[RMDB]
RNA sequence: GGGAACGACUCGAGUAGAGUCGAAAACGAUCUGUUCGCAGAUCGAGCUACGGAGACGUAGCAAAGCGAGCGAGGAGCUGGACGCUCGCCCUACCGGAAAUGUAAGCAUAUCCACGAGUGCUAGGAUAUGCCCAGCUCCAGAGAAACAGCACUCGAAUACUCAGUCAAUAUUCGUAUUGACUGAGUAAAAAGAAACAACAACAACAAC
Reactivity to 2A3 in 0.01 (KOAc 150mM, MgCl2 10mM, bicine 150mM(pH8.5), 24C), signal-to-noise 2, nucleotides 027 to 156: c020g000a000u000c000u000g050u090u070c180g000c060a000g000a010u000c000g000a020g000c010u010a000c010g000g020a070g020a010c010g000u000a000g000c020a040a040a000g010c000g000a000g000c000g000a010g000g000a000g000c000u000g010g010a070c030g000c000u000c000g000c010c010c000u040a060c010c020g100g060a050a020a000u170g040u190a040a040g000c000a000u010a000u020c000c000a020c050g000a000g000u000g000c000u030a050g000g000a000u000a010u000g000c000c000c000a000g000c000u000c000c000a010g040a000g000a050a070a020c040a040g000c000a000c000u010c000g010a010a010
Reactivity to DMS in 0.01 (KOAc 150mM, MgCl2 10mM, bicine 150mM(pH8.5), 24C), signal-to-noise 1, nucleotides 027 to 156: c030g000a000u030c000u010g000u000u010c200g050c000a040g010a020u000c010g000a050g050c050u000a010c030g000g030a300g020a250c020g000u000a020g020c010a090a030a080g020c020g000a010g020c020g000a070g010g000a130g030c000u020g020g030a200c040g000c020u000c000g020c020c020c030u000a220c030c040g000g000a080a050a080u010g010u010a120a090g020c050a050u000a010u000c000c020a030c020g010a040g070u000g010c000u010a250g000g000a030u000a010u000g000c070c010c000a070g000c050u010c030c070a150g010a110g030a100a110a060c080a050g000c020a030c000u000c010g010a100a120